[RMDB]
RNA sequence: GGGAACGACUCGAGUAGAGUCGAAAAUUUUCACGCGGCAACUGCCGCUGCCUAUGCCAUGUAUUGUUCUAAGGUGGUGUAGUAGUCUGCCUGGCACUGCGAAUUUGGAGGCACAGAUGGUACAAUGCGUUAGUGUUAACUUCGGUUAACACUAACGAAAAGAAACAACAACAACAAC
Reactivity to DMS in 0.01 (KOAc 150mM, MgCl2 10mM, bicine 150mM(pH8.5), 24C), signal-to-noise 5, nucleotides 027 to 126: u010u000u010u000c030a120c140g000c020g010g010c000a240a080c180u030g010c000c010g000c020u010g000c060c030u000a080u010g010c120c010a050u020g010u040a090u010u020g000u020u020c050u010a110a070g000g020u010g000g010u020g030u020a040g010u000a060g000u000c050u000g010c010c010u010g000g030c020a060c020u000g000c070g000a080a120u020u000u020g000g000a090g000g020c050a030c070a070g010a060u010g000g000u010a020c150a120a100u040g010
Reactivity to 2A3 in 0.01 (KOAc 150mM, MgCl2 10mM, bicine 150mM(pH8.5), 24C), signal-to-noise 8, nucleotides 027 to 126: u080u070u060u100c050a030c050g040c000g020g000c020a180a100c240u210g010c000c010g020c000u000g020c000c000u060a070u090g020c000c010a050u080g090u120a140u210u170g070u170u080c060u140a110a090g060g000u010g020g000u030g020u030a030g010u000a010g040u020c050u030g020c020c010u050g030g010c030a010c050u030g010c030g050a090a070u050u040u120g070g000a050g000g020c040a020c010a040g100a070u110g020g050u170a040c080a100a060u150g030

The record gives the reactivity of an RNA of 177 nucleotides to DMS and 2A3.
For DMS, 12,309 sequencing reads were counted.
The 2A3 profile rests on 7,101 reads.
Source: RMDB library OK1LIB, as collected in RNAgym.
The RNA was probed in 150 mM KOAc, 10 mM MgCl2 and 150 mM bicine (pH 8.5) at 24 C.